[RMDB]
RNA sequence: GGGAACGACUCGAGUAGAGUCGAAAAUGACACUAGCAGAACCAACCUGCUGGAGAGGGGCUCGUCAGGUGGCGCUGACUGCCGGUUCAGGUUCAGGGAAGGAGGCUUUGCAGGAGGCCUCCUAACCCUGGCGCACAGAGUUCGCUCUGUGCGCCAGAAAAGAAACAACAACAACAAC
Reactivity to 2A3 in 0.01 (KOAc 150mM, MgCl2 10mM, bicine 150mM(pH8.5), 24C), signal-to-noise 1, nucleotides 027 to 126: u130g030a030c020a010c060u030a010g000c010a000g040a120a070c010c010a000a120c000c000u000g010c030u000g000g010a000g000a010g050g020g000g020c010u070c140g050u040c040a000g020g060u020g050g010c010g000c050u020g050a120c010u050g010c000c000g040g010u020u050c030a000g000g060u100u060c010a000g000g000g010a060a000g000g010a000g000g010c000u010u020u030g020c080a040g020g220a020g030g030c000c000u000c000c000u000a000a000c000c000
Reactivity to DMS in 0.01 (KOAc 150mM, MgCl2 10mM, bicine 150mM(pH8.5), 24C), signal-to-noise 2, nucleotides 027 to 126: u000g070a030c170a270c010u040a030g000c050a010g010a100a180c230c160a030a260c170c000u050g000c030u000g060g000a010g010a140g000g000g030g020c000u030c180g030u030c000a000g000g000u000g000g040c080g000c010u010g000a090c060u000g000c050c040g040g000u010u000c100a020g020g000u010u030c070a030g010g000g030a240a040g030g030a010g010g000c010u000u060u000g020c300a020g020g000a040g010g000c000c000u000c000c000u020a020a060c020c000
Chemical mapping of a 177-nucleotide RNA with 2A3 and DMS.
The data come from the RNA Mapping Database (RMDB), library OK1LIB.
2A3 adducts were read by reverse transcription with SuperScript II with manganese.
The DMS profile rests on 1,463 reads.